This 207-nucleotide RNA was probed chemically with 2A3 and DMS. The 2A3 profile rests on 6,822 reads. It was measured as part of the RMDB library M2RFPK. Conditions: 150 mM KOAc, 10 mM MgCl2 and 150 mM bicine (pH 8.5), 24 C.
RNA sequence: GGGAACGACUCGAGUAGAGUCGAAAAGCAACUUAGGAUUUUAGGCUCCCCGUGCGUGUCUCGAACCAUGCCGGGCCAAACCCACGGGGGCUGGCGGUCCCCGUGCGGUCAAAAUCACACCGCUGGAAAAACAGUUCUAGCUUCGGCUAGAACUGAAGAUUGAACAUAAGUUCGCUUAUGUUCAAUCAAAAGAAACAACAACAACAAC
Reactivity to 2A3 in 0.01 (KOAc 150mM, MgCl2 10mM, bicine 150mM(pH8.5), 24C), signal-to-noise 6, nucleotides 027 to 156: g020c030a020a130c090u130u160a100g080g030a140u130u080u070u160a070g020g010c030u130c010c010c010c030g070u140g050c010g010u020g030u020c080u070c260g070a050a040c030c000a010u030g000c000c000g010g010g000c010c010a090a050a000c000c000c000a000c000g010g000g000g000g000c000u000g000g000c000g000g010u010c010c010c000c000g000u000g020c080g000g000u020c010a030a050a030a110u090c020a060c030a050c140c010g000c030u040g020g020a110a080a020a010a010c000a010g000u000u000c000u000a010g000c000u040u040c200g060g000c000u000a000g000a000a000c000u000g000a000a000
Reactivity to DMS in 0.01 (KOAc 150mM, MgCl2 10mM, bicine 150mM(pH8.5), 24C), signal-to-noise 1, nucleotides 027 to 156: g010c030a020a080c050u000u000a070g030g000a130u000u000u000u000a130g010g010c020u010c020c000c020c000g010u010g030c030g020u000g000u000c070u010c160g000a180a230c140c000a050u000g010c050c030g040g000g000c030c030a050a100a070c020c020c000a040c020g030g000g010g020g050c010u000g020g060c080g060g020u000c000c000c000c030g030u000g010c030g000g000u010c040a050a010a080a090u000c060a150c080a120c070c020g030c060u010g030g000a040a070a070a140a160c000a020g000u010u000c000u010a010g030c010u000u000c300g010g030c000u010a010g000a000a000c000u000g010a000a060